[RMDB]
RNA sequence: GGGAACGACUCGAGUAGAGUCGAAAACACAGAUUUUGUGAUGGAGUACAAUUCUGAAUUUUAUUUCCACACCCAGCAUGUUAGACCAACGAUCAGGUGGAUUGCAGCUUGUUGCAGCCUGCCAGAAAUGAAUGUUUGUGUUCGCACAAACAUUCAUAAAAGAAACAACAACAACAAC
Reactivity to 2A3 in 0.01 (KOAc 150mM, MgCl2 10mM, bicine 150mM(pH8.5), 24C), signal-to-noise 2, nucleotides 027 to 126: c010a000c020a050g150a220u070u090u200u110g020u010g050a150u080g070g040a060g040u070a020c030a020a050u060u000c060u120g080a090a080u010u060u050u090a080u120u170u000c020c000a030c000a030c030c000c010a000g040c030a050u050g030u080u080a020g020a090c030c000a060a050c080g070a070u100c070a020g030g000u030g050g010a020u030u020g050c010a020g020c060u150u260g070u050u020g130c000a000g000c000c000u010g010c000c000a080g050a020a150
Reactivity to DMS in 0.01 (KOAc 150mM, MgCl2 10mM, bicine 150mM(pH8.5), 24C), signal-to-noise 3, nucleotides 027 to 126: c110a110c050a040g010a080u000u000u000u000g020u000g000a180u000g010g010a090g020u010a040c050a030a030u000u010c080u000g020a090a060u010u000u000u000a070u010u050u000c020c000a070c100a070c020c050c070a080g010c120a040u000g010u000u000a050g010a160c050c020a070a060c200g010a090u000c060a040g030g010u010g010g020a040u000u010g000c030a040g010c270u010u000g040u000u000g010c020a030g050c030c010u000g010c010c020a040g020a040a110

The record gives the reactivity of an RNA of 177 nucleotides to 2A3 and DMS. The DMS profile rests on 2,345 reads. Conditions: 150 mM KOAc, 10 mM MgCl2 and 150 mM bicine (pH 8.5), 24 C. 2A3 adducts were read by reverse transcription with SuperScript II with manganese.